Notes: An RNA of 177 nucleotides, treated with DMS and 2A3 and read out base by base. The RNA was probed in 150 mM KOAc, 10 mM MgCl2 and 150 mM bicine (pH 8.5) at 24 C. The DMS profile rests on 4,768 reads. For 2A3 the reverse transcriptase was SuperScript II with manganese.
RNA sequence: GGGAACGACUCGAGUAGAGUCGAAAAGAUAUGGAAAUUGAAAUGUGCAAGGAACUCGGAAACGAGAAUUCUGAUGACCACAUCGUACGUUUCCUAAGUCAAAUCUCGCAUCUUCGGAUGCGAGAAAGGUUAACAGAUAGUUCGCUAUCUGUUAACCAAAAGAAACAACAACAACAAC
Reactivity to DMS in 0.01 (KOAc 150mM, MgCl2 10mM, bicine 150mM(pH8.5), 24C), signal-to-noise 5, nucleotides 027 to 126: g010a040u000a300u000g000g000a000a020a030u010u010g010a160a090a010u000g010u000g010c030a080a110g000g010a010a050c010u000c010g010g010a090a100a170c010g020a020g010a080a170u000u000c000u000g010a080u010g010a140c300c000a010c000a010u000c030g000u010a300c260g010u000u000u000c000c000u000a040a150g010u000c030a040a050a120u000c010u000c000g010c000a000u000c000u000u000c250g030g020a000u000g010c000g000a000g000a000a030a030
Reactivity to 2A3 in 0.01 (KOAc 150mM, MgCl2 10mM, bicine 150mM(pH8.5), 24C), signal-to-noise 4, nucleotides 027 to 126: g020a000u060a020u110g010g070a020a030a010u090u120g030a060a070a060u050g010u010g030c030a120a270g010g000a020a010c000u000c000g010g000a050a050a040c000g020a010g030a060a170u080u000c010u030g230a300u150g060a080c050c010a020c010a020u040c050g100u130a040c050g000u000u000u010c000c000u020a170a030g040u030c050a050a060a180u010c000u000c000g000c010a000u000c010u020u050c280g190g000a000u000g000c000g000a000g000a010a000a000
DMS adducts were read by reverse transcription with MarathonRT.